RNA sequence: GGGAACGACUCGAGUAGAGUCGAAAAUGUUUCGAAAUCGACUUCGAUACAAUCGUAGAGGACGUAUUCGGCGCAUAGUGCAUCAUUUUUGCUCCGGCAUCUUGACGUUGGCCUUUACCAGCAAUCGCCGAUGAGGCUGCUUCGGCAGCCUCAUCGGAAAAGAAACAACAACAACAAC
Reactivity to 2A3 in 0.01 (KOAc 150mM, MgCl2 10mM, bicine 150mM(pH8.5), 24C), signal-to-noise 1, nucleotides 027 to 126: u060g000u000u100u000c000g060a000a080a110u060c090g290a290c180u000u010c000g000a000u130a280c120a110a070u240c170g060u040a000g000a040g120g020a020c020g000u060a080u000u190c000g000g000c000g000c000a000u030a090g170u250g000c000a050u020c000a020u270u000u000u090u090g010c000u080c050c040g000g000c100a270u000c060u080u070g010a000c000g070u010u060g120g050c000c020u000u080u200a110c040c000a000g130c040a000a300u280c090g000